Conditions: 150 mM KOAc, 10 mM MgCl2 and 150 mM bicine (pH 8.5), 24 C. The record gives the reactivity of an RNA of 177 nucleotides to 2A3 and DMS. Reactivities are given for positions 27 through 126.
[RMDB]
RNA sequence: GGGAACGACUCGAGUAGAGUCGAAAAGCUUGUAGCUUCGGCUACAAGCAUCUAAAAUCAGCGGUAAAUAAUUACGAGGCGUUACCGCUCAACGCCUCGAUACAACCACAUCAUUCGUGAUGUGGAAUAAUUCUUACAGUUUCGACUGUAAGAAUUAAAAAGAAACAACAACAACAAC
Reactivity to 2A3 in 0.01 (KOAc 150mM, MgCl2 10mM, bicine 150mM(pH8.5), 24C), signal-to-noise 7, nucleotides 027 to 126: g000c000u010u000g000u000a010g000c010u040u040c250g120g000c000u010a000c000a000a000g000c000a000u010c010u060a060a050a020a090u110c030a010g040c010g090g080u120a050a100a090u130a120a150u210u140a100c030g000a000g000g000c010g000u000u040a090c030c000g000c030u010c010a000a000c010g000c000c000u000c000g000a000u020a050c040a040a060c000c000a000c000a000u000c000a010u020u150c190g100u050g010a000u000g000u010g000g010a000a000
Reactivity to DMS in 0.01 (KOAc 150mM, MgCl2 10mM, bicine 150mM(pH8.5), 24C), signal-to-noise 7, nucleotides 027 to 126: g010c000u000u000g010u000a010g010c000u000u010c250g030g000c000u000a000c000a010a010g000c010a010u000c040u000a060a070a100a090u010c110a020g010c010g020g000u010a050a060a080u010a080a090u010u020a130c050g010a010g000g000c000g000u000u000a080c040c030g000c020u000c100a030a020c000g010c000c000u000c000g000a100u000a040c280a090a170c000c000a000c000a010u000c000a030u000u010c170g010u000g000a010u000g010u000g000g000a050a030